Structure probing data (2A3) for a 207-nucleotide construct.
The 2A3 profile rests on 1,081 reads.
It was measured as part of the RMDB library M2RFPK.
RNA sequence: GGGAACGACUCGAGUAGAGUCGAAAAAGCAUACCAGCUCGUACGCGAGCUUGUAUGCAAAAAUUGGUGUAGCCUUACCGUAGUAGGCACAAAAACGUCAGCUGGAUCUACGGAUCCAGCUGACGAAAAAAGUGUUUUGUGUUCGCACAAAACACAAGGUAGUAUUAGCGUUCGCGCUAAUACUACCAAAAGAAACAACAACAACAAC
Reactivity to 2A3 in 0.01 (KOAc 150mM, MgCl2 10mM, bicine 150mM(pH8.5), 24C), signal-to-noise 1, nucleotides 027 to 156: a010g000c000a000u000a010c000c000a000g020c000u010c000g030u030a100c270g000c000g080a010g010c000u020u010g000u000a000u000g000c020a110a000a000a000a050u160u290g000g000u070g100u160a000g000c000c000u000u000a000c010c040g010u000a000g000u000a000g010g090c020a000c040a040a040a090a000a020c030g020u000c000a000g000c010u020g000g000a000u000c010u000a060c240g070g000a000u000c030c000a000g000c000u000g000a000c000g000a000a000a000a000a000a000g000u000g000u000u000u000u000g000u000g020u010u070c110g000c060a000c010a000a000a000a000c000a000c000a010a020